[RMDB]
RNA sequence: GGGAACGACUCGAGUAGAGUCGAAAACAUAGAACUCAGGCCCUUGGCCACAUCCAGCCUCUGGGCUCCAUCCACUGAGGCGGUUGGCCCGUGCUGACCCACAGGUCAUGGAGUCUCAGGCCUCAGGUACGUGCUAAUAAUUCGUUAUUAGCACGUAAAAAGAAACAACAACAACAAC
Reactivity to 2A3 in 0.01 (KOAc 150mM, MgCl2 10mM, bicine 150mM(pH8.5), 24C), signal-to-noise 6, nucleotides 027 to 126: c030a040u230a080g130a140a040c030u040c110a040g020g010c020c030c000u120u150g020g010c050c020a060c010a140u080c050c020a010g010c000c010u040c060u070g000g010g010c010u010c010c000a020u020c020c020a060c070u030g020a060g110g080c100g020g040u030u020g020g000c000c030c040g140u290g010c010u020g000a040c000c010c010a040c020a020g030g020u070c020a020u020g030g000a030g010u000c040u040c050a010g030g010c010c000u030c020a020g040g020
Reactivity to DMS in 0.01 (KOAc 150mM, MgCl2 10mM, bicine 150mM(pH8.5), 24C), signal-to-noise 9, nucleotides 027 to 126: c100a130u010a100g010a110a100c050u010c090a060g000g010c020c030c100u000u010g010g010c020c070a080c160a080u000c080c080a170g000c010c020u000c100u000g010g010g010c020u000c030c020a030u010c130c180a130c030u010g000a080g020g030c090g020g010u000u000g000g010c000c120c160g020u000g000c020u000g010a060c060c060c030a080c050a050g010g000u000c210a030u000g010g000a070g010u000c020u010c210a090g010g000c020c010u000c130a030g000g010